Chemical mapping of a 177-nucleotide RNA with 2A3 and DMS. Reactivities are given for positions 27 through 126. The reactions ran in a buffer of 150 mM KOAc, 10 mM MgCl2 and 150 mM bicine (pH 8.5), at 24 C. For 2A3, 686 sequencing reads were counted. Values are in units of 0.01, from 0 to 300, in steps of 10.
[RMDB]
RNA sequence: GGGAACGACUCGAGUAGAGUCGAAAAGCUGAGAAAUUCGUUUCUCAGCACUGGAAAUAAAGCCGAAAGGCUAGCCAUUCCUUAUUUGGCGAAAGCCUCGCAUGAGCCUCCACUUCGGUGGAGGCAAUUGCCAUUCAGUAUUCGUACUGAAUGGCAAAAAAGAAACAACAACAACAAC
Reactivity to 2A3 in 0.01 (KOAc 150mM, MgCl2 10mM, bicine 150mM(pH8.5), 24C), signal-to-noise 1, nucleotides 027 to 126: g000c000u040g000a000g020a010a030a000u090u090c180g020u020u010u010c000u000c000a000g030c010a010c000u010g020g090a020a170a140u120a100a270a000g010c010c020g070a130a140a090g000g070c000u000a000g000c010c010a010u030u040c020c050u060u210a300u210u160u070g000g000c050g030a090a030a000g000c000c010u060c090g040c000a000u120g140a010g030c000c000u000c000c000a000c000u010u060c230g090g000u020g000g000a000g000g020c000a010a000
Reactivity to DMS in 0.01 (KOAc 150mM, MgCl2 10mM, bicine 150mM(pH8.5), 24C), signal-to-noise 3, nucleotides 027 to 126: g040c000u000g010a030g000a020a030a030u010u030c140g000u010u000u000c000u000c000a000g010c000a010c080u000g000g010a030a140a100u000a110a170a040g010c010c010g000a140a100a140g010g020c000u000a070g000c020c010a100u000u000c020c020u000u000a140u010u020u010g000g000c000g000a100a050a130g000c020c020u000c300g010c100a080u020g000a300g000c010c000u000c000c000a000c020u000u000c130g050g020u010g000g000a000g000g020c000a000a020